[RMDB]
RNA sequence: GGGAACGACUCGAGUAGAGUCGAAAAGCCGUGCUGGAGAGGGAGCAGAAAAUGCAGAGCUAUCCCGUCGUUUCGCUAAACAAAUGCGAAACGACAAAUUGCGUUACAUACGCAAUCCUCUAAUGAAGUUGAACUUAGUAUUCGUACUAAGUUCAACAAAAGAAACAACAACAACAAC
Reactivity to 2A3 in 0.01 (KOAc 150mM, MgCl2 10mM, bicine 150mM(pH8.5), 24C), signal-to-noise 9, nucleotides 027 to 126: g020c010c020g080u050g010c010u050g010g040a030g010a010g020g020g010a020g000c020a010g150a060a160a030a010u170g030c050a020g020a030g060c010u030a040u070c000c010c010g000u000c000g000u000u000u000c000g000c010u050a160a210a130c060a050a100a020u100g000c000g000a000a000a000c000g000a000c000a000a080a000u020u010g000c000g010u010u100a170c060a120u240a040c030g000c000a000a020u040c010c010u040c010u040a070a140u230g080a140a020
Reactivity to DMS in 0.01 (KOAc 150mM, MgCl2 10mM, bicine 150mM(pH8.5), 24C), signal-to-noise 9, nucleotides 027 to 126: g030c030c050g020u000g010c030u000g010g000a050g030a050g010g010g010a060g020c030a070g000a060a050a080a070u000g010c100a080g010a090g020c050u000a130u010c010c010c020g020u000c000g010u000u000u000c000g010c010u010a040a100a130c300a070a060a090u000g000c000g000a000a000a010c000g000a010c010a010a050a030u000u000g000c000g010u000u000a060c260a110u010a020c000g000c000a010a010u000c020c020u000c020u010a110a100u010g010a080a110